[RMDB]
RNA sequence: GGGAACGACUCGAGUAGAGUCGAAAAUCAUGGUGGUUCGCCACCAUGAACUGUCUAGUCGCUUGAAAACGAUCAAAACUAGCGACUAGACUAACGAUCGAACUGGGGGACAGUUCGCUGUCCCCAAAGGGUGUAAUACAUUCGUGUAUUACACCCUAAAAGAAACAACAACAACAAC
Reactivity to DMS in 0.01 (KOAc 150mM, MgCl2 10mM, bicine 150mM(pH8.5), 24C), signal-to-noise 6, nucleotides 027 to 126: u000c000a000u000g010g020u000g000g000u000u010c220g020c010c000a000c000c000a010u000g000a020a140c060u000g000u000c000u000a010g000u000c010g000c000u010u000g010a060a050a100a160c080g000a050u000c080a050a060a110a130c110u000a010g000c000g010a010c000u000a000g000a000c010u010a020a070c210g000a040u010c030g000a170a140c270u010g010g010g010g010g000a020c000a000g010u000u010c180g020c010u000g010u000c000c000c000c010a000a010
Reactivity to 2A3 in 0.01 (KOAc 150mM, MgCl2 10mM, bicine 150mM(pH8.5), 24C), signal-to-noise 3, nucleotides 027 to 126: u030c010a010u000g010g000u010g020g040u030u040c180g050c060c000a000c000c010a000u000g000a000a020c000u000g000u020c000u000a000g000u010c000g040c030u040u090g150a110a090a070a140c090g080a120u110c100a010a050a030a240c030u010a000g010c000g010a000c000u000a000g010a000c000u000a010a000c000g060a040u130c040g050a100a080c120u190g140g000g000g000g000a000c010a000g000u040u030c080g000c010u000g000u000c000c000c000c000a000a000